[RMDB]
RNA sequence: GGGAACGACUCGAGUAGAGUCGAAAAGACGACUUUCCCCCAUUGGUUGGGAAAAGUCCCGGAACCAGGAAAUGGGAAAGAGACGGUAGAAAAGAGCGAGCCUCCCAGUUUUCGAGUAGUCCCGGACAGCGAUACGGGUUCGCCCGUAUCAAAAGAAACAACAACAACAAC
Reactivity to 2A3 in 0.01 (KOAc 150mM, MgCl2 10mM, bicine 150mM(pH8.5), 24C), signal-to-noise 9, nucleotides 027 to 129: g030a010c050g020a020c000u010u010u010c000c010c000c000c020a140u060u220g060g020u050u070g000g020g050a050a130a040a040g160u030c010c000c010g040g110a010a010c010c000a010g020g030a030a100a070u160g020g010g020a010a050a000g050a020g030a020c040g020g050u110a050g130a060a120a050a010g080a020g050c060g010a010g010c000c000u010c000c010c000a010g010u040u030u040u060c020g010a020g010u050a000g010u030c000c000c000g010g050a050c060a030g060c050
Reactivity to DMS in 0.01 (KOAc 150mM, MgCl2 10mM, bicine 150mM(pH8.5), 24C), signal-to-noise 9, nucleotides 027 to 129: g030a120c110g000a050c030u010u010u010c000c020c000c070c040a170u080u030g030g010u000u070g010g010g010a030a080a080a080g020u030c010c020c020g010g020a100a070c030c040a050g010g010a040a090a080u030g010g020g020a030a050a070g010a040g030a080c090g000g000u020a100g050a090a070a090a050g000a080g040c070g020a080g010c070c010u030c040c020c010a070g020u000u010u020u020c020g010a050g020u040a050g020u020c020c030c030g010g000a080c160a090g030c150